This 177-nucleotide RNA was probed chemically with DMS.
The reactions ran in a buffer of 150 mM KOAc, 10 mM MgCl2 and 150 mM bicine (pH 8.5), at 24 C.
It was measured as part of the RMDB library OK2TST.
[RMDB]
RNA sequence: GGGAACGACUCGAGUAGAGUCGAAAAAGUGUUUAGACUUAUUAGACCGACUGUAUGCUGUUAGACAUGAUGUUGUGGAUCAGAUGAUCAAGCAUGACUGGUCUGACAAUAAAGAUGUAGAAAGGCACUGCAGGCUCAUAUUCGUAUGAGCCUGCAGAAAAGAAACAACAACAACAAC
Reactivity to DMS in 0.01 (KOAc 150mM, MgCl2 10mM, bicine 150mM(pH8.5), 24C), signal-to-noise 1, nucleotides 027 to 126: a040g010u000g000u000u000u010a150g040a160c000u020u000a190u000u000a160g000a210c040c010g000a090c140u010g040u000a040u000g000c090u000g100u000u000a060g000a040c010a040u000g010a160u000g010u010u000g040u000g020g010a000u000c000a160g030a220u000g000a030u000c100a120a090g020c070a030u000g000a090c130u020g010g000u000c000u000g000a040c030a000a040u030a050a160a080g000a010u000g010u000a010g000a080a110a120g000g010c020a100

The DMS profile rests on 604 reads.